Structure probing data (DMS and 2A3) for a 177-nucleotide construct. It was measured as part of the RMDB library OK1LIB.
RNA sequence: GGGAACGACUCGAGUAGAGUCGAAAACACACCGGCAGCGUGCACCGCUACCUGGCCUACGGCGCGCUGGGCGUACUGAUCGUGCUGGUGGUCGCGAGGUGAACGUGAUGUCCUACCUAGCGGGCGCGCUCACACCAUUCUUCGGAAUGGUGUGAGCAAAAGAAACAACAACAACAAC
Reactivity to DMS in 0.01 (KOAc 150mM, MgCl2 10mM, bicine 150mM(pH8.5), 24C), signal-to-noise 1, nucleotides 027 to 126: c010a050c080a090c090c030g010g000c060a020g000c010g000u000g000c020a100c010c010g000c030u010a070c070c090u010g000g000c050c030u000a110c060g020g000c030g050c040g000c020u010g000g000g000c090g000u010a060c110u000g000a080u040c100g020u010g020c000u000g040g000u000g000g000u000c000g050c120g020a050g080g010u030g020a100a020c050g000u040g000a050u080g000u000c060c000u040a100c140c020u030a050g020c000g000g000g000c070g030c000
Reactivity to 2A3 in 0.01 (KOAc 150mM, MgCl2 10mM, bicine 150mM(pH8.5), 24C), signal-to-noise 4, nucleotides 027 to 126: c060a010c000a030c030c010g060g000c010a000g000c020g000u040g020c020a080c140c000g030c000u040a100c000c060u020g050g000c000c010u040a050c030g040g000c030g030c000g000c090u050g000g060g000c040g050u120a080c030u100g090a150u150c030g010u040g020c020u000g000g030u010g010g050u020c020g030c080g060a040g110g010u030g050a050a040c030g020u040g060a110u210g040u030c010c000u010a080c010c020u020a010g030c030g000g010g000c040g000c000